[RMDB]
Notes: The record gives the reactivity of an RNA of 177 nucleotides to DMS and 2A3.

RNA sequence: GGGAACGACUCGAGUAGAGUCGAAAAUUAUUCACUGGGGACGACAACUCUGGGGAGAAAAGGGUGGAUCGGAUGGGAAGAGUAGAUCCCAUGGGAAUCCGCUGGUUCCCCUGAUGUCCAGUCCCUCGUCAUAUUCUUGGUUCGCCAAGAAUAUGACAAAAGAAACAACAACAACAAC
Reactivity to DMS in 0.01 (KOAc 150mM, MgCl2 10mM, bicine 150mM(pH8.5), 24C), signal-to-noise 1, nucleotides 027 to 126: u010u010a070u010u000c140a090c140u010g020g000g000g000a030c010g000a040c300a180a050c070u010c020u000g010g030g010g000a040g000a090a020a080a060g000g010g020u000g000g000a030u000c030g000g020a030u000g000g010g000a010a030g020a130g020u000a200g010a030u000c000c010c000a010u020g000g000g000a210a020u000c000c020g000c010u010g000g010u000u000c000c000c000c040u010g010a030u000g020u000c000c060a300g000u000c000c000c000u010c240
Reactivity to 2A3 in 0.01 (KOAc 150mM, MgCl2 10mM, bicine 150mM(pH8.5), 24C), signal-to-noise 2, nucleotides 027 to 126: u090u030a090u110u080c030a020c180u100g000g000g000g000a000c000g010a000c000a070a020c050u040c020u090g020g000g020g000a020g050a060a160a050a030g240g000g020u030g010g000a010u000c030g080g140a030u010g020g000g030a050a020g080a040g200u130a040g030a160u020c010c000c010a010u030g060g000g090a100a180u010c010c010g000c040u060g050g050u070u060c000c000c010c020u010g000a020u070g000u000c020c020a010g000u000c000c000c030u000c010

For 2A3, 1,853 sequencing reads were counted.